[RMDB]
RNA sequence: GGGAACGACUCGAGUAGAGUCGAAAACUGUCACUGAGCCAACAAGAAGCCAUUGAGAAACACCUGGAUUUUGACAGCCGCUGUGCUCUGCUAGCACUGUUUGCACAGGCCACGCUCUCUGAACACCAGAUGCUACCGUAUUCGUACGGUAGCAUCUAAAAGAAACAACAACAACAAC
Reactivity to 2A3 in 0.01 (KOAc 150mM, MgCl2 10mM, bicine 150mM(pH8.5), 24C), signal-to-noise 1, nucleotides 027 to 126: c030u020g070u100c010a000c080u070g030a000g000c010c000a030a050c020a150a070g080a050a020g040c010c040a040u050u100g080a050g050a070a090a000c020a000c010c000u000g100g010a060u010u050u020u210g100a050c020a010g010c020c010g000c010u050g020u050g080c040u050c040u130g020c070u100a000g000c030a030c010u000g100u010u020u050g000c040a010c010a010g020g080c010c020a020c000g020c000u000c020u000c000u020g050a060a040c030a080c050c000
Reactivity to DMS in 0.01 (KOAc 150mM, MgCl2 10mM, bicine 150mM(pH8.5), 24C), signal-to-noise 2, nucleotides 027 to 126: c040u010g000u000c050a070c060u030g030a160g010c020c060a040a110c070a080a070g030a120a110g000c050c040a040u010u010g000a130g010a070a070a080c100a040c090c030u010g000g010a080u020u000u000u000g000a110c070a000g000c050c110g000c040u000g010u010g020c030u000c060u020g000c060u000a080g020c070a110c030u000g010u000u020u000g020c050a060c060a030g000g000c040c020a100c100g010c060u000c040u000c020u000g010a060a060c170a100c100c110

Conditions: 150 mM KOAc, 10 mM MgCl2 and 150 mM bicine (pH 8.5), 24 C. The record gives the reactivity of an RNA of 177 nucleotides to 2A3 and DMS. 2A3 adducts were read by reverse transcription with SuperScript II with manganese.